Structure probing data (2A3 and DMS) for a 177-nucleotide construct. Conditions: 150 mM KOAc, 10 mM MgCl2 and 150 mM bicine (pH 8.5), 24 C.

RNA sequence: GGGAACGACUCGAGUAGAGUCGAAAACUGCGCCGCGACCACGCGCAGAUCAUCGCCGAUGACACGGCGGUGGCCGACGCCUUUACCAAGCACUGCUACAUGGAGUGGCGCGACAACGUCUGGCGCGGCAAUCGCAGGAAUUCGUUCCUGCGAUUGCAAAAGAAACAACAACAACAAC
Reactivity to 2A3 in 0.01 (KOAc 150mM, MgCl2 10mM, bicine 150mM(pH8.5), 24C), signal-to-noise 4, nucleotides 027 to 126: c020u040g000c010g020c010c000g080c070g140a280c010c030a030c070g000c010g000c010a020g010a050u040c010a000u000c000g000c020c010g060a080u150g060a030c050a010c200g000g000c000g000g000u000g000g020c010c020g040a070c050g020c000c010u190u290u120a160c040c000a060a000g010c030a060c300u220g050c040u090a090c060a160u160g010g010a060g020u050g010g000c010g010c000g020a040c030a090a020c030g000u020c050u050g020g000c010g010c000g070
Reactivity to DMS in 0.01 (KOAc 150mM, MgCl2 10mM, bicine 150mM(pH8.5), 24C), signal-to-noise 4, nucleotides 027 to 126: c070u000g000c060g010c020c000g010c050g000a140c050c190a050c180g010c090g040c040a070g000a090u010c000a000u000c000g010c010c010g000a090u010g020a170c190a190c020g000g010c000g020g030u010g010g000c070c020g010a110c060g000c020c020u010u000u010a080c090c080a110a060g020c010a150c130u000g000c050u000a080c080a260u000g000g010a160g000u000g000g000c000g000c020g000a120c070a070a070c050g010u000c160u010g030g010c010g020c040g010